An RNA of 177 nucleotides, treated with 2A3 and DMS and read out base by base. Source: RMDB library OK2TST, as collected in RNAgym. The reactions ran in a buffer of 150 mM KOAc, 10 mM MgCl2 and 150 mM bicine (pH 8.5), at 24 C. DMS (dimethyl sulfate) methylates the pairing face of unpaired adenines and cytosines.
[RMDB]
RNA sequence: GGGAACGACUCGAGUAGAGUCGAAAAUGACAGAUACUGUCAGCUCCGAAAUCAACUCAAGCAAUGUUGUGUCAUAUAGCUUGAGUAUGAUGACUUUAGUGUCUAAUAGUAUCAUUUCGACAACUAACCCACGGAGUGGGUUCGCCCACUCCGUGGGAAAAGAAACAACAACAACAAC
Reactivity to 2A3 in 0.01 (KOAc 150mM, MgCl2 10mM, bicine 150mM(pH8.5), 24C), signal-to-noise 2, nucleotides 027 to 126: u030g000a000c000a050g030a050u040a070c040u010g000u040c020a000g000c040u050c000c020g060a150a040a000u010c000a000a010c000u000c000a010a010g000c000a000a040u050g050u180u170g260u090g210u240c000a050u090a000u040a150g000c000u000u000g000a000g000u000a080u010g000a000u000g010a010c010u030u200u120a120g080u050g010u060c050u060a060a040u000a100g030u050a040u100c060a100u100u180u100c040g010a010c010a150a020c050u050a160a100
Reactivity to DMS in 0.01 (KOAc 150mM, MgCl2 10mM, bicine 150mM(pH8.5), 24C), signal-to-noise 2, nucleotides 027 to 126: u020g020a060c150a060g000a060u000a010c000u000g030u000c010a030g010c060u020c010c060g030a040a150a070u000c000a050a000c000u000c000a000a020g010c000a160a040u000g010u000u010g060u010g040u000c060a050u000a110u000a190g010c000u000u000g000a010g020u010a030u000g000a040u010g000a130c160u020u000u010a050g030u000g040u000c000u000a050a060u010a040g000u000a010u000c010a240u000u000u010c100g050a140c100a030a100c130u000a050a100